Structure probing data (2A3 and DMS) for a 177-nucleotide construct.
RNA sequence: GGGAACGACUCGAGUAGAGUCGAAAACCCGCAACAAGCACCGAGGAGUUAAGAGAGCCGCAAGCGCAGGGAAGGCCUCCCCGCACGGGUGGGGGAAAGCGGCCGGUGCAGCGCGGGGACAGGCACUUCCGAGAUAUACCUUCGGGUAUAUCUCGGAAAAAGAAACAACAACAACAAC
Reactivity to 2A3 in 0.01 (KOAc 150mM, MgCl2 10mM, bicine 150mM(pH8.5), 24C), signal-to-noise 2, nucleotides 027 to 126: c000c000c000g050c000a030a110c120a100a000g030c010a000c000c000g090a070g150g030a090g040u070u130a140a020g070a010g000a050g140c000c000g000c120a060a120g030c070g020c150a050g030g160g060a170a030g080g040c000c000u020c000c000c040c000g170c060a120c180g150g070g030u080g000g000g010g000g010a050a040a000g040c040g000g000c000c000g000g000u000g030c000a010g040c030g030c000g040g000g020g000a020c040a050g060g040c060a050c090u000
Reactivity to DMS in 0.01 (KOAc 150mM, MgCl2 10mM, bicine 150mM(pH8.5), 24C), signal-to-noise 1, nucleotides 027 to 126: c010c010c010g000c150a090a060c300a100a090g010c000a070c000c040g000a240g010g020a170g120u010u020a150a130g000a120g000a120g060c000c010g000c010a090a140g000c150g000c050a060g000g020g000a170a170g030g030c040c070u000c000c000c000c000g000c020a160c210g000g080g000u000g000g000g000g000g020a000a090a130g000c060g010g000c000c000g040g000u000g000c020a040g000c290g020c030g010g000g000g010a080c030a110g040g000c200a080c080u000
Notes:
Source: RMDB library RFM100, as collected in RNAgym.